[RMDB]
RNA sequence: GGGAACGACUCGAGUAGAGUCGAAAAAGACGACCUCAACAAGGUGAGAGGAGCCCCGUAGAGUAUUAGGGGUAGUCCAAGGCUGCCUAAAGACCAGAUCUCUUAUCUCUCUCAUUUUGCAGUUGGACGAUUAUACUAGCUUCGGCUAGUAUAAUCGAAAAGAAACAACAACAACAAC
Reactivity to DMS in 0.01 (KOAc 150mM, MgCl2 10mM, bicine 150mM(pH8.5), 24C), signal-to-noise 2, nucleotides 027 to 126: a070g010a140c050g010a080c020c020u000c080a120a130c040a020a030g000g000u000g000a080g000a050g000g010a090g000c090c030c020c070g000u000a060g000a090g020u000a110u010u000a140g010g000g000g000u000a030g000u000c010c070a120a110g010g010c040u010g000c040c030u010a070a070a110g010a180c080c060a120g020a050u000c080u000c010u000u000a080u000c010u010c010u000c000u010c010a060u010u000u010u010g010c050a070g000u000u000g010g010a200
Reactivity to 2A3 in 0.01 (KOAc 150mM, MgCl2 10mM, bicine 150mM(pH8.5), 24C), signal-to-noise 2, nucleotides 027 to 126: a020g070a020c080g030a060c010c040u070c000a030a040c020a000a040g030g020u050g030a020g000a020g020g060a040g060c050c000c000c050g100u110a040g000a040g140u170a110u150u120a090g020g000g000g050u000a020g050u000c080c000a060a020g000g000c010u020g030c020c020u090a110a060a000g100a040c000c020a000g020a150u030c040u020c010u140u120a130u080c050u000c010u000c000u000c040a050u060u040u040u030g060c020a030g000u030u070g080g010a020

This 177-nucleotide RNA was probed chemically with DMS and 2A3. Conditions: 150 mM KOAc, 10 mM MgCl2 and 150 mM bicine (pH 8.5), 24 C. 2A3 adducts were read by reverse transcription with SuperScript II with manganese. Reactivities are given for positions 27 through 126. It was measured as part of the RMDB library OK2TST.